[RMDB]
RNA sequence: GGGAACGACUCGAGUAGAGUCGAAAAUCUCGAGAUCCUCGACUUUUUUUCUUCCACUCACCCACUGCUCGAGAAUCUCUUCCCUUCCCUCGCGCCUCUUCUUCGAUUCGGAUCGGCUCAUCUCGACAAGAGGCGGCGGUCCUCAGUGCUCUUACUCGUCCUUCAACUAGUUCGCUAGUUGAAGGACAAAAGAAACAACAACAACAAC
Reactivity to 2A3 in 0.01 (KOAc 150mM, MgCl2 10mM, bicine 150mM(pH8.5), 24C), signal-to-noise 2, nucleotides 027 to 156: u120c010u040c070g000a010g010a020u020c000c030u010c030g010a040c100u230u070u060u090u060u170u170c090u260u090c080c060a180c080u090c080a130c000c030c000a040c100u080g040c070u020c000g010a010g020a040a030u010c010u010c000u070u000c010c010c000u020u040c010c000c000u050c020g020c000g020c040c020u020c030u090u000c040u020u070c000g030a070u070u080c090g040g050a080u010c030g120g000c070u090c030a050u030c020u030c030g020a030c030a100a030g000a020g040g010c010g030g000c020g000g030u060c000c010u050c020a050g000u080g090c010u030c010u030u040a120c010u020c080
The record gives the reactivity of an RNA of 207 nucleotides to 2A3. The 2A3 profile rests on 931 reads. Reactivities are given for positions 27 through 156.